An RNA of 207 nucleotides, treated with DMS and 2A3 and read out base by base. The RNA was probed in 150 mM KOAc, 10 mM MgCl2 and 150 mM bicine (pH 8.5) at 24 C. Source: RMDB library OK3TST, as collected in RNAgym. Reactivities are given for positions 27 through 156.
[RMDB]
RNA sequence: GGGAACGACUCGAGUAGAGUCGAAAAGAUGGUUUCCAGCUUCAUCCAUGUCCCUACAAAUGACAUGAACUCAUCAUUUUUUAAGGCUGCAUAGUAUUCCAUGGCGUAUAUGUGCCACAUUUUCUUAAUCCAAUCUAUCAUUGUUGGACAUUUGGGAUCCUACCUAUAAUUUCGAUUAUAGGUAGGAAAAAGAAACAACAACAACAAC
Reactivity to DMS in 0.01 (KOAc 150mM, MgCl2 10mM, bicine 150mM(pH8.5), 24C), signal-to-noise 3, nucleotides 027 to 156: g010a070u000g020g020u000u000u010c050c030a080g000c050u010u000c030a130u000c010c010a080u000g000u010c020c020c040u010a210c120a070a060a120u010g020a060c010a050u000g000a070a070c060u000c050a070u010c020a030u010u000u000u010u000u010a060a100g020g020c000u000g000c050a090u010a090g030u000a100u000u010c020c030a200u000g020g020c040g050u000a100u010a090u010g010u010g010c010c010a040c040a060u010u000u000u000c030u000u010a050a110u000c030c000a020a050u000c070u000a080u000c080a170u000u000g010u000u010g010g010a040c090a140u000u000u010g000g020g020a280
Reactivity to 2A3 in 0.01 (KOAc 150mM, MgCl2 10mM, bicine 150mM(pH8.5), 24C), signal-to-noise 5, nucleotides 027 to 156: g090a010u050g010g030u020u070u060c040c010a010g020c030u100u070c050a030u000c030c000a020u030g030u020c000c010c010u060a060c080a040a080a030u120g010a030c050a060u110g080a090a080c060u050c060a090u010c020a060u060u030u040u060u080u110a070a040g020g000c010u020g000c040a050u060a090g090u100a110u110u070c080c070a070u090g070g000c050g070u100a100u030a020u280g090u080g030c020c000a050c000a020u110u130u020u040c040u090u080a080a060u000c020c010a040a050u040c040u130a100u120c060a140u080u130g020u020u020g010g030a030c030a090u110u130u020g000g010g000a010